[RMDB]
RNA sequence: GGGAACGACUCGAGUAGAGUCGAAAAGACAAUCCAGGGAACCGGAUGUCAUCACGUUGUUGCAGUACCAGAUGGCAUCUUAAAUCCGAUCUGCAAAUAAGCAUGUAGAAAGCUGAUGUGGGCUUUCAAAACGUGGUGCUGUUCGCAGCACCACGAAGUCUUAUAUGUUGUUCGCAACAUAUAAGACAAAAGAAACAACAACAACAAC
Reactivity to 2A3 in 0.01 (KOAc 150mM, MgCl2 10mM, bicine 150mM(pH8.5), 24C), signal-to-noise 4, nucleotides 027 to 156: g060a030c040a040a100u120c060c050a040g050g040g000a030a040c030c060g020g000a010u000g020u000c000a000u010c010a000c140g050u060u050g060u060u070g100c070a080g060u150a110c070c040a030g000a010u010g000g000c000a020u010c000u000u030a030a040a020u010c020c020g020a060u030c020u040g030c020a030a070a080u160a180a070g040c040a030u140g030u110a070g010a040a010a000g000c040u060g040a130u130g170u120g130g030g010c010u010u030u040c000a000a030a010a040c010g000u000g000g000u010g000c000u000g040u040u130c240g010c060a000g000c000a000c010c010a000c000g000a000a000
Reactivity to DMS in 0.01 (KOAc 150mM, MgCl2 10mM, bicine 150mM(pH8.5), 24C), signal-to-noise 2, nucleotides 027 to 156: g010a110c040a100a060u020c030c030a170g030g040g060a110a110c090c090g040g010a040u010g010u000c000a050u000c010a240c140g000u010u000g000u000u000g010c000a080g030u010a060c030c050a120g000a030u010g010g000c020a030u000c020u000u000a040a130a050u000c040c010g040a070u000c050u010g040c040a080a080a120u000a060a130g030c080a090u020g030u000a120g000a040a000a040g000c000u000g000a130u010g020u000g020g000g000c030u000u010u000c020a070a030a080a140c010g070u000g000g030u000g050c000u000g050u000u000c280g010c070a020g010c000a030c000c010a040c000g010a000a060